[RMDB]
RNA sequence: GGGAACGACUCGAGUAGAGUCGAAAAAGACGGCGAACAGUGGAAUAAGCGUCCACUUUGGCAUCGCGUAACUGAAAGAUUAUUCUACUUUUUCAGCCCAUUCCUGUGAUCAAUGGGAAAGCUAACAACCCUCACCAUUUUUCGAAAUGGUGAGGGUAAAAGAAACAACAACAACAAC
Reactivity to DMS in 0.01 (KOAc 150mM, MgCl2 10mM, bicine 150mM(pH8.5), 24C), signal-to-noise 2, nucleotides 027 to 126: a080g030a060c130g010g020c000g010a050a080c220a010g020u020g040g000a040a040u000a050a080g020c220g030u010c000c010a000c110u020u020u000g030g010c300a100u020c000g000c010g050u010a050a210c100u010g000a080a070a040g000a130u000u010a070u000u000c080u020a110c240u000u000u000u000u000c010a050g000c000c000c040a190u010u010c010c030u000g000u000g010a130u080c300a030a060u030g000g000g000a010a110a080g010c060u000a020a080c190a040
Reactivity to 2A3 in 0.01 (KOAc 150mM, MgCl2 10mM, bicine 150mM(pH8.5), 24C), signal-to-noise 1, nucleotides 027 to 126: a000g050a020c080g000g080c000g000a150a110c050a000g000u000g030g080a050a040u170a200a120g100c100g050u030c010c020a000c000u140u070u040g010g000c050a040u010c020g000c020g020u050a100a070c000u030g060a090a070a000g060a040u040u030a060u290u060c080u070a160c100u060u160u000u000u040c080a000g000c000c010c010a030u080u010c010c000u080g020u080g080a180u130c060a080a010u000g000g000g000a030a070a000g000c050u070a080a000c000a030
Structure probing data (DMS and 2A3) for a 177-nucleotide construct. It was measured as part of the RMDB library OK2TST.